[RMDB]
RNA sequence: GGGAACGACUCGAGUAGAGUCGAAAAUCACGUGGGAGGUGUAAUAUCCCGUAGCCUUGCACACAAUGAGGCUGUCAUAGUACUCGUGCAAGGUUCUAUAGUCUCAACACUCCACGAACUGAGACAAGAUAGUAAUCACAUUCGUGUGGUUACUAUCAAAAGAAACAACAACAACAAC
Reactivity to DMS in 0.01 (KOAc 150mM, MgCl2 10mM, bicine 150mM(pH8.5), 24C), signal-to-noise 9, nucleotides 027 to 126: u020c040a050c010g030u000g010g010g000a060g000g020u010g010u010a090a110u020a140u000c000c000c000g000u040a060g000c020c000u000u000g010c000a000c010a170c280a150a140u050g010a010g000g010c010u000g000u050c260a090u050a010g020u000a090c010u000c010g000u000g000c000a020a010g010g010u000u010c060u020a070u030a070g010u000c010u000c010a020a080c150a140c060u010c010c010a010c020g000a130a170c150u000g000a010g000a010c010a130a130
Reactivity to 2A3 in 0.01 (KOAc 150mM, MgCl2 10mM, bicine 150mM(pH8.5), 24C), signal-to-noise 9, nucleotides 027 to 126: u140c010a030c030g000u040g020g140g050a150g010g050u060g020u100a130a140u090a090u140c000c000c000g010u010a010g000c000c000u000u000g000c000a010c000a010c030a060a300u300g000a000g010g000c010u030g140u190c050a040u100a230g010u050a300c000u010c030g000u000g000c000a010a000g000g000u000u000c000u010a020u020a030g010u000c010u000c020a020a100c050a030c060u030c010c010a010c020g030a080a040c050u050g010a010g010a040c020a020a020